[RMDB]
Chemical mapping of a 207-nucleotide RNA with DMS and 2A3.
RNA sequence: GGGAACGACUCGAGUAGAGUCGAAAACUCAGAGUUGCUUUGUCAAUGUGACCUUGGGCAUGUGACCUCCCUCACGGUGACUCAUUGUCGUCACCUGGACAGUGGGCUGCCAGUGCCCCUCUUGGAGGGUUACUGUGGGGAUGCAGCAUCAUGCUUGAUAUGCACCUCAAUUCGUUGAGGUGCAUAUAAAAGAAACAACAACAACAAC
Reactivity to DMS in 0.01 (KOAc 150mM, MgCl2 10mM, bicine 150mM(pH8.5), 24C), signal-to-noise 2, nucleotides 027 to 156: c010u000c030a130g020a190g010u000u010g010c030u010u010u000g010u010c060a090a170u000g030u000g000a090c040c040u000u000g020g020g030c000a060u000g010u010g000a220c150c020u010c040c000c010u000c040a080c100g020g020u000g000a030c000u000c020a080u000u000g000u000c050g010u000c050a120c130c080u000g010g000a070c030a070g040u010g000g000g010c030u010g010c010c050a150g010u000g000c060c010c000c010u000c080u000u020g050g000a060g020g000g040u000u000a010c020u000g000u010g020g010g020g000a070u000g010c070a060g040c000a090u000c030a050u010g020c050u010u010g010
Reactivity to 2A3 in 0.01 (KOAc 150mM, MgCl2 10mM, bicine 150mM(pH8.5), 24C), signal-to-noise 1, nucleotides 027 to 156: c060u100c070a030g050a030g090u010u000g000c070u090u020u110g090u050c060a030a120u080g020u030g040a030c000c010u050u090g000g000g000c000a010u040g010u010g110a150c000c040u010c030c000c000u030c000a050c020g000g000u000g010a000c010u000c030a050u070u200g110u080c050g100u090c020a120c060c070u060g080g000a000c030a060g000u140g030g020g000c000u080g050c010c040a090g020u060g010c000c000c040c000u000c020u110u100g120g010a110g000g030g010u070u050a010c020u020g010u080g030g000g000g000a030u090g000c040a020g030c000a030u090c000a000u060g000c000u000u010g000
Conditions: 150 mM KOAc, 10 mM MgCl2 and 150 mM bicine (pH 8.5), 24 C. DMS adducts were read by reverse transcription with MarathonRT.